RNA sequence: GGGAACGACUCGAGUAGAGUCGAAAAAUCGAACUUUCGUCGCCGCGCAAAGACCUGGACAUGAACGGCCGGUUCAAAGUCGAGUCCAAGAAGGAUAUGCGCGAGAAACGCAAGAUCAAGUCGCCGACGUACAGUCUAUCUUCGGAUAGACUGUACGAAAAGAAACAACAACAACAAC
Reactivity to 2A3 in 0.01 (KOAc 150mM, MgCl2 10mM, bicine 150mM(pH8.5), 24C), signal-to-noise 3, nucleotides 027 to 126: a010u130c040g000a020a020c000u020u000u010c010g010u000c020g010c060c000g010c010g010c010a030a040a020g090a080c010c020u040g000g000a000c040a080u120g110a180a110c040g080g000c040c020g160g000u190u150c070a080a010a000g020u030c010g030a010g000u000c010c000a030a080g170a060a020g070g010a020u040a020u100g000c000g010c010g000a040g020a030a080a000c000g010c020a010a000g010a050u050c040a030a040g060u040c060g050c290c020g060a090
Reactivity to DMS in 0.01 (KOAc 150mM, MgCl2 10mM, bicine 150mM(pH8.5), 24C), signal-to-noise 3, nucleotides 027 to 126: a060u010c080g000a050a100c020u000u000u000c020g020u020c170g010c300c030g020c020g030c020a010a090a140g010a090c040c010u000g020g010a050c040a090u000g000a050a160c030g000g010c050c040g000g020u000u000c140a100a120a080g010u000c020g020a240g010u010c010c020a090a070g010a110a110g000g010a110u010a190u000g000c010g000c000g000a090g010a050a060a010c020g020c080a020a080g010a040u000c040a060a110g020u000c070g020c020c040g010a140